[RMDB]
RNA sequence: GGGAACGACUCGAGUAGAGUCGAAAAGUGGCAAGGUAAACCCCACCGGGAGCAAGACCGAAUAGGGAUGACACGGGGCGGGCGAAAGCCUGUUCACAGCCGGUUUCCGGGCCCGUCAUCCGGGUGGCAGUAACUGUACGUUCGCGUACAGUUACUGAAAAGAAACAACAACAACAAC
Reactivity to DMS in 0.01 (KOAc 150mM, MgCl2 10mM, bicine 150mM(pH8.5), 24C), signal-to-noise 1, nucleotides 027 to 126: g000u000g000g000c070a070a120g040g000u010a030a210a130c070c050c010c040a110c140c100g010g010g020a130g000c070a070a060g010a060c000c020g040a150a120u010a040g020g000g010a030u010g010a040c010a110c180g000g000g010g000c000g020g010g010c010g000a080a090a080g000c000c000u000g000u000u000c040a040c070a170g000c000c030g010g000u020u010u020c020c000g030g010g020c000c020c080g010u000c010a020u000c000c020g010g010g000u000g010g010